[RMDB]
About this RNA:
This 207-nucleotide RNA was probed chemically with 2A3 and DMS. DMS adducts were read by reverse transcription with MarathonRT. Values cover nucleotides 27 to 156. For DMS, 2,501 sequencing reads were counted. For 2A3, 1,609 sequencing reads were counted. 2A3 adducts were read by reverse transcription with SuperScript II with manganese. Values are in units of 0.01, from 0 to 300, in steps of 10. The RNA was probed in 150 mM KOAc, 10 mM MgCl2 and 150 mM bicine (pH 8.5) at 24 C.
RNA sequence: GGGAACGACUCGAGUAGAGUCGAAAAGAGAGGGUAACCACCGGCGCGCGUCACUGAUAUAUCCACCGGGGGGUAAGGGGAGAAAAGGAUACAGCGCGACGAAGUUAGCACGCUGCCCCGUAAGCCUUGAAGAGUGUAGUGUUCGCACUACACUCAACUCAAUUAUACCCUUCGGGGUAUAAUUGAGAAAAGAAACAACAACAACAAC
Reactivity to 2A3 in 0.01 (KOAc 150mM, MgCl2 10mM, bicine 150mM(pH8.5), 24C), signal-to-noise 3, nucleotides 027 to 156: g100a000g010a010g000g060g000u080a050a060c020c020a050c040c020g030g000c010g010c010g020c020g070u020c050a020c070u040g080a010u050a030u040a070u240c050c060a100c100c040g040g000g000g020g000g010u080a100a050g050g010g000g010a050g070a060a070a020a000g010g000a030u060a090c050a000g010c010g000c010g020a010c030g000a100a010g090u130u090a050g010c060a000c060g020c020u050g060c010c030c000c000g020u050a020a060g020c020c030u080u060g090a120a060g000a030g000u000g000u010a000g000u000g020u030u040c160g030c080a000c000u000a010c030a000c000u010c000a000a000
Reactivity to DMS in 0.01 (KOAc 150mM, MgCl2 10mM, bicine 150mM(pH8.5), 24C), signal-to-noise 1, nucleotides 027 to 156: g000a120g010a180g010g010g000u000a030a040c040c060a090c110c020g000g030c020g000c060g030c070g000u000c050a210c050u000g000a100u010a140u000a110u010c010c020a140c030c030g020g000g020g000g020g000u000a060a060g010g010g030g000a100g010a060a030a180a070g010g020a260u000a040c020a040g030c060g030c000g060a120c030g000a080a120g040u010u010a060g000c020a020c070g040c010u000g000c020c000c010c000g000u000a020a150g000c030c070u000u000g010a060a200g000a070g020u020g000u000a020g030u000g000u000u000c270g000c000a000c000u000a000c010a000c000u000c000a020a050